[RMDB]
RNA sequence: GGGAACGACUCGAGUAGAGUCGAAAAACUAGUAUGUACAGGGGUGAGUUGACCUGUCAUCUACACUGCUGACCAUCAACUCACCGGUCAGCUGGAUGAUGUCCACAGAGUACGACAUCAGUACUCAGUGUUUGGAUGCGUUCGCGUAUCUAAACACAAAAGAAACAACAACAACAAC
Reactivity to DMS in 0.01 (KOAc 150mM, MgCl2 10mM, bicine 150mM(pH8.5), 24C), signal-to-noise 9, nucleotides 027 to 126: a080c090u000a020g020u030a040u010g010u050a020c010a040g010g010g000g010u000g010a040g020u000u000g000a050c060c090u010g000u000c010a010u010c010u000a090c190a120c130u010g010c050u000g000a010c010c280a200u020c070a040a040c080u010c050a050c120c100g000g000u000c000a020g000c000u000g010g010a080u010g010a070u020g000u010c020c040a110c180a090g000a030g010u000a010c030g010a120c170a100u040c120a090g000u000a010c000u000c000a150
Reactivity to 2A3 in 0.01 (KOAc 150mM, MgCl2 10mM, bicine 150mM(pH8.5), 24C), signal-to-noise 9, nucleotides 027 to 126: a000c020u030a020g050u080a120u210g070u100a020c010a030g140g030g020g040u060g040a060g020u030u030g040a040c010c050u020g010u000c000a000u000c000u040a070c090a040c130u080g010c010u000g000a000c010c010a030u070c020a040a060c040u020c060a040c020c020g000g000u000c000a000g000c010u020g020g030a070u080g010a020u070g080u040c020c010a080c050a070g030a010g020u030a010c050g100a030c090a160u120c040a050g010u010a010c000u000c030a010